[RMDB]
RNA sequence: GGGAACGACUCGAGUAGAGUCGAAAAGAUAUGGACCCUGCACCGAAGCAUGGUCAAUGAUGGUCGAAUCCGUCGGAAACGACGGAUUCGACUUGAGACCAUGCCUCCGUGCUGGGUCCUAAGUCUAUCAAGGUAAUUAGUUCGCUAAUUACCUUGAAAAAGAAACAACAACAACAAC
Reactivity to DMS in 0.01 (KOAc 150mM, MgCl2 10mM, bicine 150mM(pH8.5), 24C), signal-to-noise 5, nucleotides 027 to 126: g020a030u000a300u010g000g000a010c000c000c000u000g000c000a020c010c270g010a020a040g000c000a000u000g000g010u000c000a200a120u010g000a120u010g010g000u000c000g010a030a010u000c000c000g010u010c000g010g000a110a100a250c010g020a020c010g010g000a000u000u000c000g010a000c000u000u000g000a170g010a000c010c000a010u000g000c000c010u000c030c270g010u000g000c000u000g000g000g010u000c000c000u000a010a060g010u000c000u000a210
About this RNA:
The record gives the reactivity of an RNA of 177 nucleotides to DMS. DMS adducts were read by reverse transcription with MarathonRT. The DMS profile rests on 7,872 reads. DMS (dimethyl sulfate) methylates the pairing face of unpaired adenines and cytosines. Conditions: 150 mM KOAc, 10 mM MgCl2 and 150 mM bicine (pH 8.5), 24 C.